[RMDB]
This 207-nucleotide RNA was probed chemically with 2A3. Reactivities are given for positions 27 through 156. The 2A3 profile rests on 502 reads. The reactions ran in a buffer of 150 mM KOAc, 10 mM MgCl2 and 150 mM bicine (pH 8.5), at 24 C. It was measured as part of the RMDB library OK3TST.
RNA sequence: GGGAACGACUCGAGUAGAGUCGAAAAUAGGAUCACUUUAUGCUUCCUGCCUUCCCCACUAGGGUAGGAAACCAGAGCCCAGCACAGCCUGAAUUCUACUGAAUGUGACCACAUGUUGUGGCGAUGCCAUGCCCAUGCUGUGGAGCUCACAGUCUGGCAGGAGCUAUAGGUUCGCCUAUAGCUCCUGAAAAGAAACAACAACAACAAC
Reactivity to 2A3 in 0.01 (KOAc 150mM, MgCl2 10mM, bicine 150mM(pH8.5), 24C), signal-to-noise 1, nucleotides 027 to 156: u120a010g040g030a060u090c020a080c120u240u300u140a120u300g060c020u000u010c000c000u000g030c030c020u030u060c020c010c060c020a150c080u180a090g000g030g100u040a010g020g000a060a000a000c010c010a010g020a020g120c000c000c000a010g040c020a000c000a030g000c000c000u030g040a100a170u140u120c020u040a030c050u070g060a010a140u190g010u030g000a060c000c020a030c020a060u190g020u130u110g040u190g060g000c020g080a060u200g150c060c050a100u130g020c000c010c000a020u010g000c010u020g020u070g030g060a020g020c010u020c010a030c000a040g070u060c020u120g060g000